An RNA of 207 nucleotides, treated with DMS and 2A3 and read out base by base. Source: RMDB library OK3TST, as collected in RNAgym. The RNA was probed in 150 mM KOAc, 10 mM MgCl2 and 150 mM bicine (pH 8.5) at 24 C.
RNA sequence: GGGAACGACUCGAGUAGAGUCGAAAACCAUGACGAAUAAUACUCCCUUGUGGGUUGACGCUUACGGUUAUUACAUCACUACUCCUUACAAGCCACCAAGUGACAAAGUGUUUGACUACACUUAUGACAGUAGGUCAAUGUCAAUCGUUAUGGAGGAGAACUCGUAGAUGUUCGCAUCUACGAGUUCAAAAGAAACAACAACAACAAC
Reactivity to DMS in 0.01 (KOAc 150mM, MgCl2 10mM, bicine 150mM(pH8.5), 24C), signal-to-noise 2, nucleotides 027 to 156: c020c010a090u020g000a150c030g000a050a140u010a110a100u000a100c080u000c030c030c040u000u000g070u000g010g060g000u000u020g030a110c040g040c050u010u010a050c020g010g020u000u010a140u000u000a120c140a090u000c030a030c000u000a050c020u000c030c020u000u000a080c110a100a090g000c040c040a080c030c100a170a050g000u010g020a050c030a120a030a060g030u000g000u020u000u010g020a180c050u000a100c010a020c020u030u000a040u000g030a020c090a100g020u010a030g000g000u000c090a070a160u000g000u010c050a020a110u020c020g040u000u000a080u020g000g000a080g020g030a250
Reactivity to 2A3 in 0.01 (KOAc 150mM, MgCl2 10mM, bicine 150mM(pH8.5), 24C), signal-to-noise 5, nucleotides 027 to 156: c000c000a010u030g040a010c030g010a060a020u130a140a070u090a110c050u090c050c010c000u080u140g060u210g030g050g000u000u020g010a010c030g010c070u030u040a030c030g010g040u040u030a090u130u110a060c070a050u060c020a010c030u090a060c020u060c040c000u090u140a060c050a140a040g050c030c000a040c040c040a100a010g030u020g060a030c050a070a080a010g010u020g040u040u050u060g060a050c080u050a010c070a000c020u060u040a050u110g070a020c020a030g060u080a020g080g040u040c040a030a090u100g020u030c000a020a040u000c010g030u070u030a010u040g020g020a050g090g010a110